[RMDB]
RNA sequence: GGGAACGACUCGAGUAGAGUCGAAAAGAUAUGGAAGCGACGUCCAGCGUUGAUCACUGGGUCGGAAACGACCCUGGUGGGAGCUGUCUCGCUUCCUAAGUCAAAGCGUAUCCUUCGGGAUACGCAACCCCUGGUAUAACUUCGGUUAUACCAGGGGAAAAGAAACAACAACAACAAC
Reactivity to DMS in 0.01 (KOAc 150mM, MgCl2 10mM, bicine 150mM(pH8.5), 24C), signal-to-noise 2, nucleotides 027 to 126: g010a030u000a040u000g000g000a020a000g010c000g010a030c300g030u030c300c240a010g010c010g010u000u020g000a020u020c000a010c010u000g020g030g040u000c010g010g000a020a010a020c000g010a010c000c000c000u010g010g000u000g010g000g010a010g010c010u000g000u010c090u000c010g010c000u000u010c000c000u000a000a050g000u000c010a130a150a190g020c000g020u010a000u000c000c010u010u000c190g020g010g000a010u010a000c020g010c010a030a050
Reactivity to 2A3 in 0.01 (KOAc 150mM, MgCl2 10mM, bicine 150mM(pH8.5), 24C), signal-to-noise 2, nucleotides 027 to 126: g000a000u020a000u060g010g020a010a000g000c000g020a030c120g140u240c300c120a010g000c000g240u300u020g000a000u010c000a000c020u020g000g030g000u000c000g000g000a010a010a000c010g010a010c000c000c010u020g000g000u000g000g020g010a010g000c030u010g060u130c060u010c060g000c000u000u010c000c000u000a000a000g020u000c040a070a120a070g000c000g000u000a010u000c000c000u010u080c300g170g000g000a000u010a000c000g000c010a020a010
Chemical mapping of a 177-nucleotide RNA with DMS and 2A3.
The 2A3 profile rests on 7,186 reads.
The DMS profile rests on 2,370 reads.
The RNA was probed in 150 mM KOAc, 10 mM MgCl2 and 150 mM bicine (pH 8.5) at 24 C.